[RMDB]
RNA sequence: GGGAACGACUCGAGUAGAGUCGAAAAUCUUGAGUGAUUUUGGGCAUUGAUAAUGUGAUGUUGGUUUUUAUAUAAUCUAACACAUCCAUAGAUUUAUAAUCUUUAUAAUUCAGCCCAACAAUUCAACUGAUAGUUAGUCCUUCGGGACUAACUAUCAAAAAGAAACAACAACAACAAC
Reactivity to 2A3 in 0.01 (KOAc 150mM, MgCl2 10mM, bicine 150mM(pH8.5), 24C), signal-to-noise 4, nucleotides 027 to 126: u010c000u040u100g080a040g020u100g040a050u010u000u020u020g000g000g030c080a100u020u210g020a020u080a190a020u060g100u130g010a040u010g040u100u030g010g040u050u050u010u140u000a260u000a060u060a140a040u000c040u050a110a030c040a000c000a080u000c010c010a000u030a070g010a010u000u170u060a150u170a110a020u010c010u020u190u040a250u050a160a100u050u010c010a000g010c000c010c000a010a000c040a020a110u120u100c010a040a050c000
Reactivity to DMS in 0.01 (KOAc 150mM, MgCl2 10mM, bicine 150mM(pH8.5), 24C), signal-to-noise 2, nucleotides 027 to 126: u020c010u020u020g000a190g000u020g020a040u000u000u000u000g010g000g000c000a120u040u000g000a000u040a080a080u000g000u010g010a050u000g020u000u000g000g010u000u000u000u010u040a050u030a070u020a100a010u030c020u060a070a060c050a080c020a020u010c050c040a020u000a050g000a080u000u010u100a040u010a080a110u040c010u020u020u060a140u010a080a060u000u020c010a070g000c000c020c000a000a010c200a050a070u010u000c010a080a090c180